[RMDB]
Conditions: 150 mM KOAc, 10 mM MgCl2 and 150 mM bicine (pH 8.5), 24 C.
Chemical mapping of a 207-nucleotide RNA with 2A3 and DMS.
For DMS, 1,830 sequencing reads were counted.
2A3 adducts were read by reverse transcription with SuperScript II with manganese.
Source: RMDB library OK3TST, as collected in RNAgym.
Reactivities are given for positions 27 through 156.
RNA sequence: GGGAACGACUCGAGUAGAGUCGAAAAUGUUUCAGUAACCUGAUACCAACUAUUCCAUUUUCACCUCCACUGGGUAUACUGCAAUUCAUUUCUACACUACCCGGAGUUAAUGUAGACACCAAAGCUUAAGGGCAGUCUUCCACAAGACUGCUCCUAAAGUAGUAGGACGUUUCGACGUCCUACUACUAAAAGAAACAACAACAACAAC
Reactivity to 2A3 in 0.01 (KOAc 150mM, MgCl2 10mM, bicine 150mM(pH8.5), 24C), signal-to-noise 3, nucleotides 027 to 156: u060g020u000u010u040c030a030g000u020a030a050c010c000u030g050a090u120a160c080c070a120a070c090u100a130u090u130c060c060a110u120u020u100u190c180a100c060c020u100c060c040a130c060u090g020g000g040u080a120u020a140c000u020g080c070a030a070u010u060c010a020u010u050u050c030u070a040c040a030c040u040a020c000c040c000g080g010a020g010u020u070a070a050u090g060u080a000g060a070c000a020c060c000a080a020a130g060c030u090u130a030a020g010g000g000c000a000g000u000c000u070u000c130c040a100c030a100a000g000a000c000u000g000c010u100c000c000u020a000a030
Reactivity to DMS in 0.01 (KOAc 150mM, MgCl2 10mM, bicine 150mM(pH8.5), 24C), signal-to-noise 1, nucleotides 027 to 156: u000g010u000u000u010c030a030g070u020a090a110c020c030u010g010a220u000a200c050c020a090a100c060u000a160u000u000c020c020a170u010u010u010u000c060a110c050c000u010c000c050a110c210u000g030g000g030u000a120u000a020c010u010g000c060a100a100u000u010c050a070u000u010u020c020u000a000c020a080c020u010a030c000c000c050g000g000a140g000u000u030a040a040u000g020u000a100g010a100c090a030c040c020a060a160a180g000c090u010u000a040a030g000g020g020c000a030g020u000c000u000u000c050c170a160c230a090a090g020a030c000u000g010c030u010c000c000u020a000a060